RNA sequence: GGGAACGACUCGAGUAGAGUCGAAAAGAAGGAGGUCUGCCCAAUUUCGCAUAUAUCCUUACCACGGCAGACUUCGAAGGGCUUGAGAAUGCGAAAUUGGUGGUAAGGAUAUGUCUCAAGCCUUAGACUACAGGUAAGUAUUCGUACUUACCUGUAGAAAAGAAACAACAACAACAAC
Reactivity to 2A3 in 0.01 (KOAc 150mM, MgCl2 10mM, bicine 150mM(pH8.5), 24C), signal-to-noise 4, nucleotides 027 to 126: g070a040a050g130g060a020g000g030u000c000u000g000c000c000c030a020a030u030u050u040c020g000c110a020u150a010u020a010u180c000c000u000u000a000c010c000a040c010g010g000c000a000g000a000c000u020u000c000g030a040a040g020g000g000c000u000u000g010a010g010a050a030u110g020c010g040a030a060a090u080u060g100g020u030g000g000u010a010a010g000g000a010u020a040u060g010u000c000u000c000a000a010g000c000c000u000u010a030g010a010
Reactivity to DMS in 0.01 (KOAc 150mM, MgCl2 10mM, bicine 150mM(pH8.5), 24C), signal-to-noise 7, nucleotides 027 to 126: g000a110a090g000g000a070g010g000u000c010u010g000c000c020c180a090a270u000u000u000c020g020c020a140u010a120u010a060u000c010c010u000u000a010c010c010a100c090g010g010c020a020g000a030c030u000u000c030g010a110a080g000g010g010c010u000u000g000a020g000a060a050u010g010c010g010a020a040a050u000u010g010g040u000g010g010u010a010a020g010g010a040u010a020u010g000u010c000u000c010a000a010g000c000c000u000u000a080g010a260